Source: RMDB library RFMREP, as collected in RNAgym. The record gives the reactivity of an RNA of 177 nucleotides to DMS and 2A3. In probing experiments dimethyl sulfate is read out at A N1 and C N3, which are open when not base-paired. The reactions ran in a buffer of 150 mM KOAc, 10 mM MgCl2 and 150 mM bicine (pH 8.5), at 24 C.
[RMDB]
RNA sequence: GGGAACGACUCGAGUAGAGUCGAAAAGAUGAGGGUUACUUUGUACGAAUGUCAGUGAAAUUGAAUUAAACAACGAAAAAUGCUUCAUGGCUUAACGGAGAUUUAUGAGGAAAACCGAACUUGAGGCGAAUUAUUUUCGGUUCGCCGAAAAUAAUUCAAAAGAAACAACAACAACAAC
Reactivity to DMS in 0.01 (KOAc 150mM, MgCl2 10mM, bicine 150mM(pH8.5), 24C), signal-to-noise 3, nucleotides 027 to 126: g000a100u000g020a130g000g000g020u000u000a070c040u000u000u000g020u000a070c130g020a090a070u010g010u020c010a050g010u010g000a100a100a100u010u010g010a060a070u000u010a050a060a140c070a030a070c110g010a040a040a060a100a080u000g000c010u000u000c020a040u000g010g010c120u000u000a050a040c090g010g000a090g020a190u000u000u000a050u010g010a090g010g010a060a020a110a090c020c040g000a060a050c050u010u000g000a050g010g000c090
Reactivity to 2A3 in 0.01 (KOAc 150mM, MgCl2 10mM, bicine 150mM(pH8.5), 24C), signal-to-noise 2, nucleotides 027 to 126: g060a040u120g020a030g040g010g020u070u030a040c040u140u160u160g020u030a020c000g070a070a050u100g020u060c020a030g020u030g110a030a070a040u150u050g010a020a010u110u090a100a070a040c060a050a010c030g110a020a030a030a030a030u150g010c000u020u020c000a080u080g090g030c050u070u090a110a000c010g040g010a030g000a080u040u160u170a140u160g080a180g000g060a030a050a000a000c000c010g000a010a010c000u030u020g020a000g030g050c000